[RMDB]
RNA sequence: GGGAACGACUCGAGUAGAGUCGAAAAUCGGUGUCCAUGUCGGAGAGGAUGGUUGCGAUCGCUUCUUGUUCGGUCAGUGUUGGCAACUGCAGAUGAAGACUGCCAAAUUCAUUACCAUUGAUACCCGCUCCGCAAUGUGAUUCGUCACAUUGCGGAGAAAAGAAACAACAACAACAAC
Reactivity to 2A3 in 0.01 (KOAc 150mM, MgCl2 10mM, bicine 150mM(pH8.5), 24C), signal-to-noise 1, nucleotides 027 to 126: u070c010g010g030u040g030u000c050c010a000u130g080u080c080g070g040a080g010a050g120g020a030u050g030g010u020u160g000c060g110a100u040c050g010c080u090u080c080u200u230g100u130u060c000g020g050u060c010a010g020u040g030u230u090g080g030c000a030a040c040u040g000c010a040g010a130u110g000a080a000g040a080c060u050g010c030c010a020a070a090u140u020c030a000u090u080a090c000c030a030u000u000g010a010u060a180c000c000c030g050
Reactivity to DMS in 0.01 (KOAc 150mM, MgCl2 10mM, bicine 150mM(pH8.5), 24C), signal-to-noise 1, nucleotides 027 to 126: u010c060g010g030u000g000u000c020c010a050u030g000u020c080g010g000a070g000a120g010g020a060u000g020g030u000u000g030c050g040a050u000c080g000c100u000u010c070u010u010g020u000u010c110g030g020u020c060a150g000u000g020u020u000g010g010c050a060a060c060u010g010c110a080g010a080u010g010a100a080g010a140c050u000g000c010c050a040a080a080u010u000c040a040u010u000a060c080c040a080u010u000g000a120u000a110c010c010c000g010

Background: This 177-nucleotide RNA was probed chemically with 2A3 and DMS. Conditions: 150 mM KOAc, 10 mM MgCl2 and 150 mM bicine (pH 8.5), 24 C. For 2A3 the reverse transcriptase was SuperScript II with manganese.